Structure probing data (DMS and 2A3) for a 177-nucleotide construct. The DMS profile rests on 3,113 reads. DMS adducts were read by reverse transcription with MarathonRT. Source: RMDB library OK1LIB, as collected in RNAgym.
[RMDB]
RNA sequence: GGGAACGACUCGAGUAGAGUCGAAAAGCGCGGGUCCCCAGCGGCGCGCGCCGCAACCAGCCCAGCUGUGACCGGAGGACGUGCGGGACGCCCGUUGCUGACGGGCCGCUUGCGCUCGUCGGGCAGGGCGACGGAUGCUAUUCGUAGCAUCCGUCGCAAAAGAAACAACAACAACAAC
Reactivity to DMS in 0.01 (KOAc 150mM, MgCl2 10mM, bicine 150mM(pH8.5), 24C), signal-to-noise 2, nucleotides 027 to 126: g030c010g000c010g000g030g000u010c040c000c020c090a110g010c100g000g030c020g020c220g040c230g030c000c030g000c080a030a140c120c110a120g000c020c060c080a110g010c050u010g000u000g010a070c140c030g000g010a090g010g020a060c030g000u000g030c030g000g020g020a140c080g000c000c000c000g010u000u010g010c040u020g000a030c010g010g000g000c020c010g000c110u030u030g010c090g040c000u000c010g010u000c060g010g000g020c050a150g030g000
Reactivity to 2A3 in 0.01 (KOAc 150mM, MgCl2 10mM, bicine 150mM(pH8.5), 24C), signal-to-noise 4, nucleotides 027 to 126: g020c000g010c030g020g090g000u070c000c020c010c010a040g050c070g070g000c120g010c030g020c020g000c030c000g040c010a050a080c040c030a000g030c040c050c020a020g030c010u060g060u130g090a100c020c040g040g010a100g050g030a100c140g110u060g010c010g000g020g020a030c020g020c000c010c000g180u190u050g030c040u020g020a020c010g020g010g040c010c010g050c120u130u210g010c050g000c050u000c020g000u010c010g010g020g000c030a050g000g070